RNA sequence: GGGAACGACUCGAGUAGAGUCGAAAAAGGUACAUUGCAUUAUUUCUUUGCACAGACUUCCAUAUUUGUAGACUGGCGGUCAUACAAUUAUGCUGUGUCUAGUGCCUUCUGGUUAUUCACCCACAUUCACCGGUCGACUUCGGUCGACCGAAAAGAAACAACAACAACAAC
Reactivity to DMS in 0.01 (KOAc 150mM, MgCl2 10mM, bicine 150mM(pH8.5), 24C), signal-to-noise 1, nucleotides 027 to 129: a030g010g010u030a040c040a140u000u050g010c000a070u000u000a050u050u030u030c150u040u010u020g000c000a010c300a000g020a050c040u010u000c300c000a040u020a050u010u010u050g000u000a030g030a000c020u080g040g030c250g000g020u020c020a110u030a050c010a100a000u010u010a000u000g000c000u020g010u040g020u040c020u090a030g010u000g010c030c040u010u030c100u040g010g000u030u050a050u050u120c160a120c000c000c000a040c210a100u000u010c070a050c090
Reactivity to 2A3 in 0.01 (KOAc 150mM, MgCl2 10mM, bicine 150mM(pH8.5), 24C), signal-to-noise 4, nucleotides 027 to 129: a060g040g000u050a050c040a070u100u070g060c020a010u030u060a110u080u300u050c100u050u040u090g000c020a000c000a010g010a010c020u230u070c070c000a030u000a000u000u030u020g000u000a000g000a020c010u040g250g010c090g120g000u000c010a000u000a030c010a000a040u040u010a000u040g050c070u060g020u000g010u090c000u020a010g000u020g010c000c000u020u080c010u040g080g010u070u050a040u050u070c060a090c000c040c000a040c000a020u110u090c020a050c090